[RMDB]
RNA sequence: GGGAACGACUCGAGUAGAGUCGAAAAACGCAUUGCACUGUUUGGCCCAUCCGUACGCCGCUUCUCCCCUCUCCUCACGGUUGGGGGCUGGAGUGGUGGGGGGCGUGCGUGAAAUUGCCGCCCUUUGAUAUUUUCUACUAUUCGUAGUAGAAAAUAUAAAAGAAACAACAACAACAAC
Reactivity to DMS in 0.01 (KOAc 150mM, MgCl2 10mM, bicine 150mM(pH8.5), 24C), signal-to-noise 9, nucleotides 027 to 126: a050c040g010c070a070u010u020g010c070a170c080u020g010u000u000u010g000g010c010c000c010a090u030c080c090g020u030a110c050g010c000c000g010c000u000u000c000u000c070c000c000c000u000c040u000c000c000u010c260a140c300g000g000u000u000g000g000g000g010g020c130u000g000g000a010g020u000g000g030u000g000g010g000g000g000g010c000g010u030g010c010g010u010g010a040a080a100u020u010g010c010c020g000c020c010c000u000u010u010g000
Reactivity to 2A3 in 0.01 (KOAc 150mM, MgCl2 10mM, bicine 150mM(pH8.5), 24C), signal-to-noise 9, nucleotides 027 to 126: a000c040g010c040a070u070u190g040c050a050c080u140g080u130u060u120g140g010c010c000c010a060u070c040c020g080u080a050c040g000c000c000g030c010u010u000c000u010c000c000c010c000u010c000u000c010c000u150c030a060c070g030g000u030u020g020g010g000g000g000c050u040g000g000a000g000u010g000g000u060g000g000g000g000g000g000c020g030u170g010c010g000u070g040a070a070a070u120u100g020c010c010g020c000c000c000u030u030u060g030